[RMDB]
RNA sequence: GGGAACGACUCGAGUAGAGUCGAAAACUCCGGCGGCGAGCGCCAGCGCGUGCUGCUGGCCCAGGGCCUGGUACCGCCGCCGCAACUGCUGGUGCUGGACGAACCGAUGUCGGCCCUCGACGAGGGACGCCAGGAGGACUUUCGAGUCCUCCUGGCGAAAAGAAACAACAACAACAAC
Reactivity to 2A3 in 0.01 (KOAc 150mM, MgCl2 10mM, bicine 150mM(pH8.5), 24C), signal-to-noise 1, nucleotides 027 to 126: c020u020c010c020g000g020c010g030g010c010g070a160g060c060g020c030c000a040g010c080g000c040g120u210g130c040u000g020c000u060g050g000c030c020c020a080g000g000g000c050c040u010g010g000u060a050c000c040g000c010c000g010c050c010g000c000a070a060c030u090g000c020u090g000g000u050g060c000u030g000g040a000c030g010a120a080c030c000g080a100u090g060u090c000g040g030c000c070c000u000c020g230a190c110g020a050g030g000g030a020
Reactivity to DMS in 0.01 (KOAc 150mM, MgCl2 10mM, bicine 150mM(pH8.5), 24C), signal-to-noise 2, nucleotides 027 to 126: c040u000c040c010g010g000c000g010g010c000g030a070g040c090g010c010c010a000g000c140g020c070g010u000g010c030u000g010c050u000g030g010c140c100c010a070g020g010g020c050c020u000g010g010u000a080c050c030g000c000c020g000c000c020g000c090a060a060c130u000g000c010u000g010g010u000g010c020u020g000g000a080c040g000a150a090c060c020g010a090u010g010u000c020g000g040c030c000c010u000c020g020a050c100g000a110g010g000g020a170
The record gives the reactivity of an RNA of 177 nucleotides to 2A3 and DMS.
For 2A3 the reverse transcriptase was SuperScript II with manganese.
For DMS, 2,133 sequencing reads were counted.
DMS adducts were read by reverse transcription with MarathonRT.